[RMDB]
RNA sequence: GGGAACGACUCGAGUAGAGUCGAAAAUUAAGGAGGAAGACCUGCUGCAUGCACUCGGUGCGAAGAAACUGUGCGCUGGUGCGCUGAGCUUUAUGAGUGUUGUUGUGCAGUCUCUUUUCGUACCUGAGGAUCAUUAAUUAUUCGUAAUUAAUGAUCCAAAAGAAACAACAACAACAAC
Reactivity to DMS in 0.01 (KOAc 150mM, MgCl2 10mM, bicine 150mM(pH8.5), 24C), signal-to-noise 5, nucleotides 027 to 126: u030u030a080a100g000g010a090g020g000a080a040g000a100c110c040u010g000c020u020g020c050a080u020g000c030a050c020u010c020g020g000u010g000c050g010a060a060g010a080a060a120c130u020g010u020g010c000g010c030u010g020g010u010g010c010g010c020u000g000a140g000c060u010u010u010a060u030g010a030g000u000g000u000u000g000u010u000g010u010g010c020a020g010u010c030u000c020u000u000u010u010c040g030u010a070c010c010u000g000a210
Reactivity to 2A3 in 0.01 (KOAc 150mM, MgCl2 10mM, bicine 150mM(pH8.5), 24C), signal-to-noise 9, nucleotides 027 to 126: u230u130a080a040g060g020a020g020g020a070a050g020a050c020c020u010g010c020u040g020c020a070u080g010c020a010c020u040c040g050g020u070g020c040g030a040a020g070a070a150a030c120u140g050u090g090c010g010c050u110g070g070u170g030c020g000c020u050g030a030g020c020u090u170u120a170u220g070a050g030u020g000u020u030g030u050u020g020u040g000c020a020g040u000c010u000c000u040u050u020u040c040g030u050a070c010c010u020g010a030

The record gives the reactivity of an RNA of 177 nucleotides to DMS and 2A3. The reactions ran in a buffer of 150 mM KOAc, 10 mM MgCl2 and 150 mM bicine (pH 8.5), at 24 C. DMS adducts were read by reverse transcription with MarathonRT. The data come from the RNA Mapping Database (RMDB), library OK1LIB. The DMS profile rests on 21,204 reads.